[RMDB]
RNA sequence: GGGAACGACUCGAGUAGAGUCGAAAACUGUGCCGUAUCGAAGAUGAUAUAGGCAACAUAUGUCAUAUACCUUGCUGUAUAUGACACAGCACUCCGCGACAGGACCAGGCUCGUCCUGUCUCAUCGUUAGGCACAUUGACUUCGGUCAAUGUGCCUAAAAAGAAACAACAACAACAAC
Reactivity to 2A3 in 0.01 (KOAc 150mM, MgCl2 10mM, bicine 150mM(pH8.5), 24C), signal-to-noise 2, nucleotides 027 to 126: c050u000g040u050g060c050c000g080u000a000u010c010g100a080a040g010a130u300g000a030u000a010u020a160g020g020c000a000a000c050a070u180a000u020g000u000c000a000u020a000u050a000c000c060u110u270g040c180u060g100u000a000u000a000u000g000a000c000a000c000a000g060c010a010c000u040c040c000g010c030g020a000c000a010g000g000a000c040c000a100g300g000c160u120c040g000u070c000c000u030g000u000c070u000c000a070u090c000g080u040